[RMDB]
RNA sequence: GGGAACGACUCGAGUAGAGUCGAAAAACUCAUACCUUACGAGGUAUCAGAAUGACUUCGUGGUAGAGCGCCACGAACGGAAAAUAAAGAAAGCUCGAUUGAAACGCACCGUGUACGCACGGUGCGAAAAAGUCGAUCCAGUUCGCUGGAUCGACAACACAUUAGUGUGGUUCGCCACACUAAUGUGAAAAGAAACAACAACAACAAC
Reactivity to DMS in 0.01 (KOAc 150mM, MgCl2 10mM, bicine 150mM(pH8.5), 24C), signal-to-noise 1, nucleotides 027 to 156: a150c050u000c000a100u000a010c000c000u010u000a130c230g030a040g050g020u010a000u010c050a100g020a200a140u010g000a160c070u000u010c010g050u000g000g000u000a040g010a050g060c030g000c000c000a000c020g010a010a020c080g000g020a070a050a070a100u000a060a100a140g010a040a070a110g010c000u000c000g040a270u000u000g020a080a110a160c000g040c010a000c000c020g020u010g060u010a090c300g080c010a020c040g000g020u000g000c020g000a000a010a040a030a070g000u000c000g000a000u000c000c010a040g000u010u010c210g020c000u000g030g030a010u000c000g000a000c010a010a060
Reactivity to 2A3 in 0.01 (KOAc 150mM, MgCl2 10mM, bicine 150mM(pH8.5), 24C), signal-to-noise 4, nucleotides 027 to 156: a000c010u010c000a010u010a000c000c000u060u030a080c230g100a030g010g000u000a000u030c040a020g220a260a170u220g040a100c040u010u000c010g000u010g000g030u040a160g000a010g020c000g000c010c000a000c000g000a010a040c060g100g040a040a020a000a030u060a020a030a030g130a030a030a010g010c020u010c030g120a160u080u220g060a090a100a000c030g020c000a000c010c020g030u020g050u070a030c210g000c040a000c000g000g000u000g030c010g000a000a000a000a000a000g000u000c000g000a000u000c010c000a000g020u080u070c140g050c130u010g000g000a000u000c000g000a000c000a010a000